[RMDB]
RNA sequence: GGGAACGACUCGAGUAGAGUCGAAAAGCUAGUCGGAGACGACUAGCAACGAUCAGUUCGCUGAUCGGAUCGUGCAUUCCAACACGCUCGAAGCACGUAUAGGCGACGCAGAGCGUGAUACUGUAAAAUCAGGAUACUUAAUUAAUUAGGCGUCGCGGAUCCAUAUGAUCUUCGGAUCAUAUGGAUCAAAAGAAACAACAACAACAAC
Reactivity to DMS in 0.01 (KOAc 150mM, MgCl2 10mM, bicine 150mM(pH8.5), 24C), signal-to-noise 2, nucleotides 027 to 156: g000c000u000a010g010u010c030g020g000a300g010a300c010g010a010c000u000a010g030c000a020a030c020g000a030u000c010a020g010u000u000c300g040c010u000g000a010u000c000g010g000a070u000c030g050u010g000c000a300u000u000c090c000a100a110c030a050c010g020c000u000c030g010a160a080g000c010a020c040g000u000a250u000a030g010g030c010g040a000c010g040c020a250g010a060g010c000g020u000g000a010u000a010c030u020g000u000a090a080a120a210u000c010a010g020g010a160u000a040c110u010u000a030a140u000u000a060a160u000u000a120g030g020c000g000u000c000g040c000g030
Reactivity to 2A3 in 0.01 (KOAc 150mM, MgCl2 10mM, bicine 150mM(pH8.5), 24C), signal-to-noise 6, nucleotides 027 to 156: g000c000u000a000g000u000c000g000g030a020g010a100c010g000a000c000u000a000g000c000a000a010c000g000a010u000c010a010g060u070u120c160g020c160u010g010a010u010c010g010g040a100u110c030g020u040g030c020a140u070u040c030c010a050a020c000a020c010g010c000u010c010g050a080a030g040c010a020c050g050u090a090u070a170g100g000c000g000a000c000g020c020a010g000a000g000c000g000u000g000a010u040a030c000u010g030u060a020a020a050a170u140c000a010g050g020a050u050a180c070u130u140a090a140u100u100a040a060u080u120a130g040g020c000g000u000c000g000c000g010
About this RNA:
The record gives the reactivity of an RNA of 207 nucleotides to DMS and 2A3. Values cover nucleotides 27 to 156. For 2A3 the reverse transcriptase was SuperScript II with manganese. Source: RMDB library OK3TST, as collected in RNAgym.